The record gives the reactivity of an RNA of 177 nucleotides to 2A3 and DMS. For 2A3 the reverse transcriptase was SuperScript II with manganese. DMS adducts were read by reverse transcription with MarathonRT. Source: RMDB library OK1LIB, as collected in RNAgym. Reactivities are given for positions 27 through 126. As a SHAPE reagent, 2A3 marks flexible, mostly unpaired nucleotides at the ribose 2'-OH. For 2A3, 659 sequencing reads were counted.
RNA sequence: GGGAACGACUCGAGUAGAGUCGAAAAGGCUUGUAGUCAGCUUGGUCACACCAAUGUAAAAUCAUACUACAUGCAGUAUGGUGUGCAACUCUUAUAAGCUGCACCCGAUAAGUUUGGGAUAAUUCGGGUAAAUCGAGUCGUUCGCGACUCGAUUUACAAAAGAAACAACAACAACAAC
Reactivity to 2A3 in 0.01 (KOAc 150mM, MgCl2 10mM, bicine 150mM(pH8.5), 24C), signal-to-noise 2, nucleotides 027 to 126: g040g000c040u000u000g030u000a000g030u190c150a000g170c060u000u150g100g060u110c000a000c000a000c020c000a000a100u000g000u050a000a070a000a240u200c090a100u030a190c050u010a090c090a030u180g020c000a070g020u130a220u130g000g000u030g000u050g000c010a030a100c000u010c020u170u210a140u040a230a030g000c000u000g060c050a010c000c000c000g000a020u020a040a010g260u200u160u180g230g000g000a050u140a120a020u090u000c000g050g000
Reactivity to DMS in 0.01 (KOAc 150mM, MgCl2 10mM, bicine 150mM(pH8.5), 24C), signal-to-noise 2, nucleotides 027 to 126: g050g000c000u000u000g000u000a000g010u100c140a000g000c180u000u000g000g000u120c010a000c010a010c010c030a050a010u000g000u000a070a180a100a040u010c200a050u000a090c000u000a060c100a050u000g020c210a070g000u030a300u010g050g030u000g000u010g010c090a040a080c100u000c140u020u030a060u000a010a010g000c050u010g000c110a160c000c000c000g030a120u000a070a080g060u000u010u000g000g010g000a100u050a030a210u000u000c000g030g000